[RMDB]
RNA sequence: GGGAACGACUCGAGUAGAGUCGAAAACCAGAUGACGGUCCUGCCAUGAGACCGCAACGAUAGCAUGUCGCAUCGAAUGGACUCGGGGAGUCGGCAGCUUGCCCCACGGAUGAGCGCCUAAUGCCGGAAGAGACGUGCAACUUCGGUUGCACGUCAACGUAUGUCUUCUCUUCGGAGAAGACAUACGAAAAGAAACAACAACAACAAC
Reactivity to 2A3 in 0.01 (KOAc 150mM, MgCl2 10mM, bicine 150mM(pH8.5), 24C), signal-to-noise 5, nucleotides 027 to 156: c020c000a020g040a150u130g040a030c030g000g020u020c030c010u050g110c030c040a140u150g040a060g000a110c040c000g020c070a030a050c030g060a050u110a090g050c050a070u160g080u200c090g020c020a020u020c050g030a060a080u050g000g020a030c030u010c110g010g020g010g000a040g040u040c030g020g000c030a030g040c030u080u160g050c000c000c000c020a030c060g030g010a090u100g030a020g030c050g020c010c020u070a090a030u110g010c020c000g040g030a060a010g060a030g000a040c000g000u000g000c000a000a000c000u040u060c180g070g000u000u000g000c000a000c000g000u000c000a000a000
Reactivity to DMS in 0.01 (KOAc 150mM, MgCl2 10mM, bicine 150mM(pH8.5), 24C), signal-to-noise 2, nucleotides 027 to 156: c000c030a200g010a100u000g020a080c000g010g000u000c010c020u030g060c040c210a150u000g000a120g000a020c000c040g020c050a070a030c030g000a130u010a220g020c070a150u010g050u000c040g010c040a070u010c020g000a100a300u000g010g000a060c060u000c050g010g010g010g000a130g000u000c020g010g000c010a110g020c040u010u000g000c020c010c000c070a200c090g010g020a110u000g000a070g060c040g000c020c030u000a040a100u010g000c010c000g040g010a100a090g000a140g000a020c010g020u000g010c000a010a020c000u000u010c300g030g000u000u000g000c020a000c000g000u000c000a000a030
An RNA of 207 nucleotides, treated with 2A3 and DMS and read out base by base. Reactivities are given for positions 27 through 156. Conditions: 150 mM KOAc, 10 mM MgCl2 and 150 mM bicine (pH 8.5), 24 C. Source: RMDB library M2RFPK, as collected in RNAgym. The 2A3 profile rests on 3,335 reads. For DMS the reverse transcriptase was MarathonRT.